[RMDB]
RNA sequence: GGGAACGACUCGAGUAGAGUCGAAAAGUAUAAAUCCGCAGACAUCUGCCAGAUGCUUCUAGUCCUUGGUCGUGUGAACUCGGAUGAUGAAGCACGUACCUAUCCCCUGCCCAGGGACGUCGACGAGUCCACUUUCCAAUACGCCCAUGGCAUUACCCAAGUAUGGCAAGUUCGCUUGCCAUACUUGAAAAGAAACAACAACAACAAC
Reactivity to 2A3 in 0.01 (KOAc 150mM, MgCl2 10mM, bicine 150mM(pH8.5), 24C), signal-to-noise 2, nucleotides 027 to 156: g040u010a080u060a170a140a020u080c070c050g010c010a010g090a130c010a080u080c020u010g040c080c030a090g080a150u010g010c020u010u020c010u010a000g020u000c000c000u080u070g030g000u040c090g070u110g140u200g300a030a030c000u010c020g050g000a050u080g000a040u180g020a040a010g010c010a000c000g000u040a030c000c000u010a080u040c030c000c000c000u020g020c000c000c020a010g050g000g030a050c010g050u050c040g010a130c000g010a020g060u050c040c020a060c050u050u090u000c010c000a100a060u070a090c030g030c030c000c000a010u040g000g000c050a080u040u030a050c030c080